[RMDB]
About this RNA
An RNA of 177 nucleotides, treated with DMS and 2A3 and read out base by base. Conditions: 150 mM KOAc, 10 mM MgCl2 and 150 mM bicine (pH 8.5), 24 C. For 2A3 the reverse transcriptase was SuperScript II with manganese. The 2A3 profile rests on 1,494 reads. The DMS profile rests on 2,823 reads. It was measured as part of the RMDB library OK2TRN. Reactivities are given for positions 27 through 126.
RNA sequence: GGGAACGACUCGAGUAGAGUCGAAAAUGGGCUCCGCGGGUUUUGCGGUCGACUAUUCGGACGCCGGAUUGUAUCUAUGGGCCACUCGCGGCGAGCCGUGCCGCGACAGUGCCGCGUGGCUGGCGCAGAGUUAUCCAUGGUUCGCCAUGGAUAACUCAAAAGAAACAACAACAACAAC
Reactivity to DMS in 0.01 (KOAc 150mM, MgCl2 10mM, bicine 150mM(pH8.5), 24C), signal-to-noise 3, nucleotides 027 to 126: u010g020g010g010c010u000c100c020g020c080g000g010g020u010u010u000u000g030c060g010g000u000c070g020a100c130u000a250u000u010c010g020g000a120c080g030c030c040g020g020a070u010u010g010u000a160u010c040u020a140u010g020g000g000c070c030a060c120u000c020g000c000g010g010c020g000a090g010c030c100g010u010g010c100c080g010c010g010a020c130a050g030u000g010c000c020g010c060g020u000g000g010c060u000g020g000c030g000c100a080
Reactivity to 2A3 in 0.01 (KOAc 150mM, MgCl2 10mM, bicine 150mM(pH8.5), 24C), signal-to-noise 2, nucleotides 027 to 126: u070g050g030g040c010u020c040c020g000c040g020g070g000u020u130u150u290g040c010g000g030u030c020g020a080c050u090a080u120u130c000g060g010a070c080g030c030c000g040g000a060u030u110g080u130a120u020c080u030a120u170g060g040g000c000c020a020c020u020c000g050c010g020g020c040g020a040g020c000c000g010u060g020c000c000g020c000g000a020c010a010g110u120g210c030c000g050c020g030u040g030g020c010u050g010g010c050g000c070a010